[RMDB]
RNA sequence: GGGAACGACUCGAGUAGAGUCGAAAAGCGUUCAUGAGCUUACAUGAACGUGAGCAUUCUUAGUCCAAAGAAUGCUGAGCCUUCUGUAAGCUCAGAGGGCUGACUAGAGUUUGGACUAACUUUAGUAGGACAGCUAUCUAUUCGUAGAUAGCUGUCCAAAAGAAACAACAACAACAAC
Reactivity to DMS in 0.01 (KOAc 150mM, MgCl2 10mM, bicine 150mM(pH8.5), 24C), signal-to-noise 2, nucleotides 027 to 126: g020c010g010u000u000c000a030u020g000a160g020c170u000u010a070c010a010u000g010a000a020c080g040u000g010a020g000c010a010u000u000c000u010u010a080g000u020c140c050a040a020a030g000a020a010u000g000c000u010g010a040g010c010c020u000u000c020u000g000u010a060a120g010c070u000c000a010g010a040g000g010g010c010u010g000a130c060u000a030g010a060g000u000u000u010g000g000a070c090u010a060a080c100u000u010u000a040g010u000a140
Reactivity to 2A3 in 0.01 (KOAc 150mM, MgCl2 10mM, bicine 150mM(pH8.5), 24C), signal-to-noise 2, nucleotides 027 to 126: g010c060g110u010u030c030a050u060g030a020g150c070u120u110a030c000a010u100g010a010a000c000g010u030g010a010g010c010a010u000u010c000u050u030a060g050u000c000c020a010a010a010g000a000a000u010g000c000u010g010a000g040c000c000u010u010c000u000g070u050a170a070g070c020u000c010a000g010a000g010g000g020c010u010g030a000c050u010a030g010a020g190u010u120u090g100g020a040c060u060a040a030c010u110u050u040a070g010u070a050
An RNA of 177 nucleotides, treated with DMS and 2A3 and read out base by base. For 2A3, 2,205 sequencing reads were counted. The reactions ran in a buffer of 150 mM KOAc, 10 mM MgCl2 and 150 mM bicine (pH 8.5), at 24 C. It was measured as part of the RMDB library OK2TRN.